[RMDB]
RNA sequence: GGGAACGACUCGAGUAGAGUCGAAAAAGGAGGUUCUUGGUAAAUAAUAAGUUGGUCUGCGGCGUUGAAUGUAAAAGCAGUCUGUUAGAUCCUCCGCUAGAUCAUUCUUCAAUCCGACUAUAGCGACAUAUAUUGUGCAUUUCGAUGCACAAUAUAUAAAAGAAACAACAACAACAAC
Reactivity to 2A3 in 0.01 (KOAc 150mM, MgCl2 10mM, bicine 150mM(pH8.5), 24C), signal-to-noise 3, nucleotides 027 to 126: a020g030g000a020g000g000u030u010c020u100u130g060g030u090a080a140a110u140a050a100u080a230a040g040u070u060g050g000u000c010u010g010c020g030g000c040g050u060u090g060a110a060u090g040u180a090a010a020a090g000c010a000g030u030c020u060g060u070u000a020g010a040u020c000c010u000c020c000g000c000u010a030g010a060u070c010a050u060u050c000u030u050c040a060a120u050c040c000g040a040c080u130a090u050a260g110c020g050a030c010
Reactivity to DMS in 0.01 (KOAc 150mM, MgCl2 10mM, bicine 150mM(pH8.5), 24C), signal-to-noise 6, nucleotides 027 to 126: a090g000g000a050g010g000u000u000c020u000u010g020g010u010a070a090a120u010a070a090u010a060a090g010u000u000g020g000u000c020u010g010c020g010g000c260g010u000u010g010a050a050u000g010u010a050a080a110a100g010c030a060g000u000c050u000g010u000u000a040g010a060u000c020c020u000c020c010g010c080u000a050g000a090u000c030a060u000u000c020u000u000c080a080a090u010c050c040g010a070c090u000a100u010a070g010c070g010a090c230